[RMDB]
Conditions: 150 mM KOAc, 10 mM MgCl2 and 150 mM bicine (pH 8.5), 24 C.
Chemical mapping of a 207-nucleotide RNA with 2A3 and DMS.
In probing experiments dimethyl sulfate is read out at A N1 and C N3, which are open when not base-paired.
2A3 is a SHAPE reagent: it acylates the 2'-hydroxyl of flexible nucleotides of all four kinds.
DMS adducts were read by reverse transcription with MarathonRT.

RNA sequence: GGGAACGACUCGAGUAGAGUCGAAAACGAGGAUCGGGAAUUCAUGAAGGUGAUGACGGAGAAACACGAUGACUUAAUCGUAUAUGACGGAGACGUAGUCAAUAAACGAGAGGCAAUUUCGCUAAUCAAACGGGGACUACAAGAGCCGAUGGCGGUGCAGUUCGUAGUUGUUCGCAACUACGAACUGAAAAGAAACAACAACAACAAC
Reactivity to 2A3 in 0.01 (KOAc 150mM, MgCl2 10mM, bicine 150mM(pH8.5), 24C), signal-to-noise 2, nucleotides 027 to 156: c030g000a020g020g020a040u050c050g000g040g030a020a030u080u060c040a070u180g060a100a020g030g010u050g010a070u050g050a030c000g070g010a020g050a020a060a010c050a010c030g050a040u020g110a060c050u080u170a060a000u030c000g000u010a030u010a030u190g030a010c020g010g000a030g010a050c040g020u000a020g000u040c020a010a010u130a110a100a020c030g000a000g030a000g060g000c020a030a030u080u150u230c120g010c000u040a080a060u040c000a010a010a120c030g030g000g000g020a020c010u010a030c030a050a030g050a020g060c020c000g040a030u040g080g060c060g070g020u030g010
Reactivity to DMS in 0.01 (KOAc 150mM, MgCl2 10mM, bicine 150mM(pH8.5), 24C), signal-to-noise 1, nucleotides 027 to 156: c050g000a040g050g010a020u000c040g000g000g000a190a100u010u000c080a060u000g040a070a120g000g000u010g020a110u000g040a150c040g010g020a020g030a230a050a050c120a010c080g030a060u040g000a100c100u000u000a000a080u000c030g070u010a020u000a060u000g030a200c070g100g000a200g000a220c230g020u040a150g010u000c000a060a060u000a080a140a060c040g000a050g000a170g000g040c060a010a300u000u000u000c090g000c000u070a050a300u040c040a060a060a140c060g000g010g030g030a110c030u000a040c050a120a180g030a170g010c000c040g050a050u000g000g000c010g000g030u000g000